This 177-nucleotide RNA was probed chemically with DMS.
[RMDB]
RNA sequence: GGGAACGACUCGAGUAGAGUCGAAAAGAUAUGGAUGGUACUAAGCAGGCACGUGUGGGAGCGAUCAAUUCGGAAACGAAUUGUUCGCGAAGAACACACGUGCCUGGAAACGUACCAUCCUAAGUCAUCGUUACUUAGACUUCGGUCUAAGUAACGAAAAAGAAACAACAACAACAAC
Reactivity to DMS in 0.01 (KOAc 150mM, MgCl2 10mM, bicine 150mM(pH8.5), 24C), signal-to-noise 2, nucleotides 027 to 126: g000a080u000a300u000g000g020a020u000g010g030u000a010c000u000a200a220g020c000a030g000g010c000a020c010g020u000g000u000g030g000g000a100g030c000g000a000u030c010a000a000u000u000c000g020g000a160a110a240c000g000a010a020u000u010g000u000u020c000g010c020g000a010a220g000a220a180c000a000c000a000c000g000u000g020c010c000u000g000g000a030a040a170c300g000u000a010c010c000a010u000c000c000u000a000a040g020u000c050a150
Values cover nucleotides 27 to 126.
The data come from the RNA Mapping Database (RMDB), library TTRINS.